The record gives the reactivity of an RNA of 177 nucleotides to 2A3 and DMS. High 2A3 reactivity points to a flexible backbone, as in loops and unpaired stretches. It was measured as part of the RMDB library TTRDEL. The reactions ran in a buffer of 150 mM KOAc, 10 mM MgCl2 and 150 mM bicine (pH 8.5), at 24 C. For 2A3, 3,195 sequencing reads were counted.
[RMDB]
RNA sequence: GGGAACGACUCGAGUAGAGUCGAAAAGAUAUGGAUCGAUGUGUGAGCGAAGAACUCGGAAACGAGGGAGCUCCACAGCGAUCCUAAGUCAAAGACUCCGGUCUAUGUUCGCAUAGACCGGAGUCAAGAUAGCACUAGUCUUCGGACUAGUGCUAUCAAAAGAAACAACAACAACAAC
Reactivity to 2A3 in 0.01 (KOAc 150mM, MgCl2 10mM, bicine 150mM(pH8.5), 24C), signal-to-noise 1, nucleotides 027 to 126: g000a010u050a070u170g010g020a020u000c000g000a030u000g040u010g090u150g000a010g040c000g140a300a060g020a100a040c000u010c000g010g000a090a040a040c020g010a010g020g000g000a010g000c000u000c000c000a000c000a000g010c000g000a000u000c000c010u000a010a000g000u030c050a040a050a200g030a000c010u020c000c000g010g000u050c000u010a000u010g040u010u080c300g000c180a000u000a000g000a010c000c010g000g000a000g010u000c000a010a000
Reactivity to DMS in 0.01 (KOAc 150mM, MgCl2 10mM, bicine 150mM(pH8.5), 24C), signal-to-noise 2, nucleotides 027 to 126: g010a020u010a300u010g000g000a010u000c010g000a020u000g010u000g000u010g010a000g030c000g000a110a100g000a110a180c010u000c010g020g010a110a110a120c000g000a020g020g000g000a120g010c010u000c000c000a010c000a010g020c000g000a000u000c010c000u000a010a050g000u000c040a080a090a150g000a030c000u010c000c000g010g000u010c000u010a010u000g000u000u010c200g000c010a010u000a000g000a000c000c020g020g000a000g000u000c010a000a040